RNA sequence: GGGAACGACUCGAGUAGAGUCGAAAAGAACUCGAACGAGUUCACGUGAGAACUCUCACACGUACGAGAACACACUCGAUCACGAGUGUGAGAGUGUACUCGAGUUCUCGUGUACUCUCUCGUUCGAACUCGAGAACGUGUGAGUGAACGAACGAGAAAGAUCUAGAACAUUCGUGUUCUAGAUCUUAAAAGAAACAACAACAACAAC
Reactivity to 2A3 in 0.01 (KOAc 150mM, MgCl2 10mM, bicine 150mM(pH8.5), 24C), signal-to-noise 9, nucleotides 027 to 156: g010a010a000c010u010c040g050a190a100c160g010a060g010u020u020c030a030c040g030u060g030a060g010a040a010c010u000c010u010c030a000c000a000c020g010u040a020c010g010a020g030a180a010c030a000c000a010c030u020c010g150a280u220c180a140c300g010a010g010u020g000u050g010a010g000a000g000u030g000u010a030c030u030c020g010a020g050u250u100c100u010c110g000u020g010u030a030c010u000c000u000c000u010c040g080u140u150c080g030a060a030c010u010c000g060a080g050a070a020c030g010u020g010u010g020a010g000u010g000a010a010c010g000a000a000c010g020a010g100a080
Reactivity to DMS in 0.01 (KOAc 150mM, MgCl2 10mM, bicine 150mM(pH8.5), 24C), signal-to-noise 4, nucleotides 027 to 156: g000a030a040c000u010c000g010a090a130c130g010a060g010u010u000c010a090c040g020u000g000a220g010a070a130c020u010c000u020c010a040c030a040c030g030u000a180c040g020a110g020a130a260c080a100c030a050c000u010c010g010a270u000c250a170c080g020a060g020u010g040u000g000a050g000a100g020u000g010u000a030c040u000c010g010a070g010u010u010c070u000c000g000u000g000u000a040c030u000c000u000c020u000c010g000u000u000c020g010a080a190c000u010c020g000a140g010a100a050c020g030u000g020u010g010a040g020u000g000a070a160c000g020a110a060c040g010a140g010a140